[RMDB]
RNA sequence: GGGAACGACUCGAGUAGAGUCGAAAAGAUAUGGACCGGAGCAACAGCCACCAUUCGGAAACGAAUGUGUGGACAUGCUCCCGUCCUAAGUCAAAGCUGAGUUAUUGCUUCGGCAAUAACUCAGCAAGAUAAGAGAUUUCUUCGGAAAUCUCUUAUCAAAAGAAACAACAACAACAAC
Reactivity to DMS in 0.01 (KOAc 150mM, MgCl2 10mM, bicine 150mM(pH8.5), 24C), signal-to-noise 3, nucleotides 027 to 126: g010a030u000a200u010g000g000a020c010c300g010g000a010g020c010a010a100c300a190g000c010c000a020c000c000a010u000u000c000g000g000a060a070a110c000g010a000a000u000g000u020g040u000g000g010a030c110a090u000g000c000u000c000c000c120g000u000c000c000u000a010a060g000u000c020a120a110a130g010c000u000g000a010g010u000u000a000u000u000g000c010u000u010c210g010g010c000a010a010u000a000a010c000u000c000a000g010c020a020a030
Reactivity to 2A3 in 0.01 (KOAc 150mM, MgCl2 10mM, bicine 150mM(pH8.5), 24C), signal-to-noise 1, nucleotides 027 to 126: g010a000u050a010u070g000g000a000c010c030g010g020a000g000c000a000a200c050a230g050c010c000a000c010c000a000u010u000c010g020g010a060a040a000c020g010a000a010u000g220u110g000u000g090g070a030c000a010u010g000c000u010c000c000c000g000u000c010c000u010a040a010g020u000c020a090a070a060g000c000u010g000a000g010u010u000a000u010u030g010c000u030u070c300g150g000c020a010a010u010a000a000c000u010c000a000g000c000a000a010